Conditions: 150 mM KOAc, 10 mM MgCl2 and 150 mM bicine (pH 8.5), 24 C. Structure probing data (DMS and 2A3) for a 177-nucleotide construct. Source: RMDB libraries RFM100 and RFMREP, as collected in RNAgym.
RNA sequence: GGGAACGACUCGAGUAGAGUCGAAAAAAUCCUCUAUUUAUCCACAGGACAGGUACAGCACAGGCAGCGACAGUGCGAGCUUUCCCCACACCACCCCGUCCAUGUGCCUCAACCCUGACCUGGAGGGUCCUAAACAAAUUUUCGAAUUUGUUUAGGAAAAAGAAACAACAACAACAAC
Reactivity to DMS in 0.01 (KOAc 150mM, MgCl2 10mM, bicine 150mM(pH8.5), 24C), signal-to-noise 8, nucleotides 027 to 126: a070a070u020c000c010u000c130u020a090u010u020u020a090u030c030c020a180c020a030g000g020a100c030a020g000g010u000a150c270a120g000c030a040c040a050g000g010c100a070g010c060g010a060c090a050g020u010g010c030g000a070g000c050u000u000u000c010c010c000c080a100c120a080c090c060a080c020c030c020c040g010u000c030c040a110u010g010u010g000c040c020u010c180a110a120c190c010c010u000g000a050c010c010u000g000g020a090g000g000g000
Reactivity to 2A3 in 0.01 (KOAc 150mM, MgCl2 10mM, bicine 150mM(pH8.5), 24C), signal-to-noise 8, nucleotides 027 to 126: a000a010u080c040c010u080c030u040a180u060u160u060a070u040c010c010a010c000a030g010g030a020c000a010g020g020u070a040c040a030g010c010a000c010a020g050g040c020a010g030c040g050a030c040a040g040u020g080c020g000a030g010c010u030u070u030c010c000c000c000a040c010a010c010c010a020c000c020c000c000g010u020c020c020a080u050g010u020g020c000c010u060c020a050a070c010c000c000u010g030a060c000c010u010g010g000a100g030g000g020